[RMDB]
RNA sequence: GGGAACGACUCGAGUAGAGUCGAAAAAGUGCUGGGAUUACAAGCAUAAGCCACUGUGCCAGGCCUUAGGUCCCUUUCAAAUGCAAGAUAUUCCUGAUUUUCCUGUUCUAUUAUUGCAGGGGAAGGGAAGAAUUGUCUUUUUACAUUCUCCCGAAAAGGAUAAUCGAGGAUUCGUCCUCGAUUAUCCAAAAGAAACAACAACAACAAC
Reactivity to DMS in 0.01 (KOAc 150mM, MgCl2 10mM, bicine 150mM(pH8.5), 24C), signal-to-noise 1, nucleotides 027 to 156: a120g000u000g040c110u010g030g040g010a120u010u000a140c160a120a110g020c030a060u000a110a160g020c040c050a100c070u100g040u000g010c020c020a180g020g040c010c010u000u000a130g010g080u020c000c010c040u010u040u010c060a060a120a120u030g000c080a020a130g030a090u020a150u000u010c000c020u000g000a140u000u010u030u000c020c030u010g050u000u000c130u000a170u010u000a100u010u010g040c020a000g020g000g040g000a060a060g040g000g000a050a010g000a060a070u000u010g000u010c030u000u000u000u000u000a100c050a130u000u020c040u000c010c000c010g030a050a070a140a120
Reactivity to 2A3 in 0.01 (KOAc 150mM, MgCl2 10mM, bicine 150mM(pH8.5), 24C), signal-to-noise 3, nucleotides 027 to 156: a020g090u080g000c010u020g020g030g040a030u050u130a120c040a070a070g040c040a090u150a180a010g010c020c010a170c130u160g090u160g030c050c050a030g010g130c020c030u030u060a050g020g000u010c000c000c000u010u080u040c090a100a080a010u070g010c020a030a000g050a070u120a040u120u040c000c000u100g130a270u030u030u030u010c010c010u010g020u030u070c080u090a190u260u050a120u150u300g000c010a000g010g000g010g020a000a040g000g000g020a010a010g020a000a030u060u000g030u020c050u020u090u020u020u010a030c010a100u060u050c040u040c030c000c000g070a060a090a000a010